RNA sequence: GGGAACGACUCGAGUAGAGUCGAAAACAGCUGAAGCCGGUUGAUGACGGUGAGGACGUACAUGGCCGUGACGGUCGAGGCCGACUCCAGGGUGUCCGUCGGAAGCGGGGGGCGAAUGCAUGCCGCCAGUCCUAGUACUCUUCGGAGUACUAGGACUAAAAGAAACAACAACAACAAC
Reactivity to DMS in 0.01 (KOAc 150mM, MgCl2 10mM, bicine 150mM(pH8.5), 24C), signal-to-noise 4, nucleotides 027 to 126: c060a080g000c020u000g000a190a090g000c040c000g000g010u020u010g010a140u000g010a080c030g010g010u010g000a130g010g000a130c130g010u000a100c100a090u010g000g020c000c020g010u000g010a110c070g000g000u000c030g010a130g000g000c020c020g000a190c080u010c050c080a130g000g000g000u010g020u000c030c040g000u010c010g000g000a110a060g020c030g000g010g020g010g000g010c020g020a050a130u010g010c100a090u030g000c030c020g000c050c050
Reactivity to 2A3 in 0.01 (KOAc 150mM, MgCl2 10mM, bicine 150mM(pH8.5), 24C), signal-to-noise 4, nucleotides 027 to 126: c030a010g040c030u100g080a070a010g030c020c010g040g090u080u060g080a120u140g030a050c010g010g040u070g040a080g010g120a010c020g010u040a040c010a110u110g070g000c000c020g070u080g110a120c060g040g010u040c030g020a100g030g100c000c020g040a070c010u050c050c030a050g000g080g000u090g040u050c030c020g030u030c030g040g050a080a030g010c030g020g000g020g000g010g000c010g040a060a020u180g020c070a060u100g010c010c010g080c030c030